[RMDB]
The record gives the reactivity of an RNA of 170 nucleotides to DMS and 2A3.
RNA sequence: GGGAACGACUCGAGUAGAGUCGAAAAUGAUUUCUUCAUCUUUGAUGUAGACAAAGUUAAAACACCUCAUAUUGUACGUCAGCGUUUAACUGAGUACACUAUGAUGGAUCUUGUAUAUGCCCUGAGGACGGCGGCAUGUUCGCAUGCCGCAAAAGAAACAACAACAACAAC
Reactivity to DMS in 0.01 (KOAc 150mM, MgCl2 10mM, bicine 150mM(pH8.5), 24C), signal-to-noise 5, nucleotides 027 to 129: u020g010a000u010u020u000c020u000u000c040a070u000c020u030u030u110g020a010u050g010u020a030g020a070c210a070a060a170g020u050u080a070a050a150a140c150a110c020c020u010c020a020u020a000u000u000g000u000a010c000g060u040c030a020g020c030g100u050u110u140a100a170c020u030g020a000g030u040a020c020a010c040u020a000u040g020a020u050g060g000a100u020c110u050u040g000u000a040u050a090u010g010c000c000c030u040g010a170g030g020a070c100g040
Reactivity to 2A3 in 0.01 (KOAc 150mM, MgCl2 10mM, bicine 150mM(pH8.5), 24C), signal-to-noise 4, nucleotides 027 to 129: u090g040a090u070u030u010c000u020u060c000a040u010c050u020u040u210g040a010u030g020u000a030g040a020c020a020a150a020g050u110u120a040a150a030a010c050a020c030c000u000c000a000u010a020u000u000g020u000a000c000g270u000c000a020g010c060g060u110u130u200a080a030c000u000g000a010g010u020a000c010a020c000u000a010u010g000a040u220g000g000a050u060c040u090u130g020u020a080u000a000u110g000c000c000c000u050g010a040g070g000a040c010g040

It was measured as part of the RMDB library 15KLIB.
Values are in units of 0.01, from 0 to 300, in steps of 10.
For DMS, 11,196 sequencing reads were counted.